[RMDB]
RNA sequence: GGGAACGACUCGAGUAGAGUCGAAAAACAAUACUAAGGCGCAAAGUGGGGAAAAGUAAACGAUGACCCAUCACCAAGUCUACGUUAGAAUGAUAUAUUAAUAUGUAAAAUAUGAUUGUGAACUCUGCUAAAGAAGUAAAUUCGUUUACUUCUUUAGAAAAGAAACAACAACAACAAC
Reactivity to DMS in 0.01 (KOAc 150mM, MgCl2 10mM, bicine 150mM(pH8.5), 24C), signal-to-noise 3, nucleotides 027 to 126: a050c090a080a060u000a070c080u000a130a130g000g000c010g010c130a060a050a100g020u000g000g000g000g000a040a050a050a150g000u040a090a060a110c160g030a080u010g000a200c070c030c020a080u000c060a120c050c020a070a140g000u000c000u000a070c070g000u000u000a090g000a100a040u010g000a130u030a060u020a120u000u030a070a110u010a080u030g010u040a050a020a070a080u010a010u030g000a110u020u000g030u000g030a090a110c120u000c050u010g000
Reactivity to 2A3 in 0.01 (KOAc 150mM, MgCl2 10mM, bicine 150mM(pH8.5), 24C), signal-to-noise 3, nucleotides 027 to 126: a000c000a010a020u100a040c000u040a070a150g000g000c000g000c070a100a080a000g050u040g030g070g020g000a000a070a100a030g100u190a070a160a060c040g030a020u110g040a010c000c070c000a030u120c050a010c020c060a090a000g000u020c010u030a030c020g050u050u000a060g070a130a090u150g030a020u050a020u030a020u240u190a100a080u140a100u200g010u110a180a130a040a020u180a110u150g090a170u000u060g010u010g090a020a010c050u010c000u020g000